[RMDB]
Source: RMDB library TTRDEL, as collected in RNAgym. Structure probing data (2A3 and DMS) for a 177-nucleotide construct. DMS adducts were read by reverse transcription with MarathonRT. For 2A3 the reverse transcriptase was SuperScript II with manganese. The DMS profile rests on 3,316 reads.
RNA sequence: GGGAACGACUCGAGUAGAGUCGAAAAGAUAUGGAUCUGGUUCCAGGCAUCGAUCUCGGAAACGAGGGAGCCUGAGACCUGGAUCCUAAGUCAAACAGCUCUAGCCUGUUCGCAGGCUAGAGCUGAACUGUAUCCUUAUCUUCGGAUAAGGAUACAGAAAAGAAACAACAACAACAAC
Reactivity to 2A3 in 0.01 (KOAc 150mM, MgCl2 10mM, bicine 150mM(pH8.5), 24C), signal-to-noise 3, nucleotides 027 to 126: g040a010u070a030u130g010g020a010u010c010u020g030g000u040u030c020c000a000g000g000c010a240u300c200g130a110u040c020u000c000g030g020a090a090a080c010g000a020g000g000g010a020g000c000c020u070g020a110g000a050c010c020u020g050g000a010u000c010c000u020a110a020g080u050c030a050a050a120c010a020g000c020u000c000u010a000g000c020c010u020g090u090u130c300g030c160a000g000g020c000u000a000g010a000g000c000u000g000a000a000
Reactivity to DMS in 0.01 (KOAc 150mM, MgCl2 10mM, bicine 150mM(pH8.5), 24C), signal-to-noise 3, nucleotides 027 to 126: g000a010u000a300u010g000g000a020u010c000u000g010g000u010u000c010c000a020g020g000c000a290u000c170g000a070u020c000u020c000g000g000a120a130a160c010g000a000g010g000g000a020g010c000c010u010g000a040g010a010c010c000u000g050g010a000u000c000c000u010a020a130g000u000c030a140a130a280c000a000g010c010u000c010u000a010g010c000c010u010g000u000u010c190g010c000a020g000g000c010u000a000g010a010g020c000u000g000a010a050